Record summary: Conditions: 150 mM KOAc, 10 mM MgCl2 and 150 mM bicine (pH 8.5), 24 C. Chemical mapping of a 207-nucleotide RNA with 2A3 and DMS. For 2A3 the reverse transcriptase was SuperScript II with manganese.

RNA sequence: GGGAACGACUCGAGUAGAGUCGAAAAUCCGACUCUCAUAGGCUCUCUAACCCAACUCCUACUCAAUACGUCCUCGUCGUACAGAACGGUAACAUGUUUUCCGAACAUCCGCGCUUGGGUAUACGAGAAAGGCGUAGAUUAUUCGUAAUCUACGCAAAUAGGAGGUUAGGUUCGCCUAACCUCCUAUAAAAGAAACAACAACAACAAC
Reactivity to 2A3 in 0.01 (KOAc 150mM, MgCl2 10mM, bicine 150mM(pH8.5), 24C), signal-to-noise 2, nucleotides 027 to 156: u050c040c010g040a010c000u060c000u010c050a070u060a150g030g010c010u000c010u000c010u080a100a100c020c000c000a020a000c020u030c040c010u090a090c030u050c100a070a070u080a120c030g070u050c030c020u070c010g110u050c010g000u060a050c010a090g050a120a010c010g000g020u120a060a050c020a090u100g040u040u030u090u040c050c020g040a060a050c010a070u080c020c030g060c030g010c070u070u040g000g010g000u070a040u010a100c060g010a000g150a130a070a000g150g000c000g000u000a000g000a000u010u010a020u050u050c120g030u000a000a010u030c000u000a000c000g040c000a000a050
Reactivity to DMS in 0.01 (KOAc 150mM, MgCl2 10mM, bicine 150mM(pH8.5), 24C), signal-to-noise 1, nucleotides 027 to 156: u000c070c010g000a070c030u000c000u000c050a060u000a200g010g050c060u000c040u000c000u000a140a090c010c030c000a050a110c020u010c010c000u020a120c040u020c070a190a160u010a120c030g010u000c010c000u010c010g050u000c050g000u000a080c080a100g020a050a150c060g020g000u000a070a110c090a130u000g010u000u000u000u000c120c070g020a100a070c020a080u020c000c010g000c040g070c040u020u020g000g030g040u000a080u000a070c000g000a040g000a070a090a110g000g050c000g020u000a000g020a010u000u000a050u000u020c220g040u000a010a010u010c000u000a000c000g000c010a000a010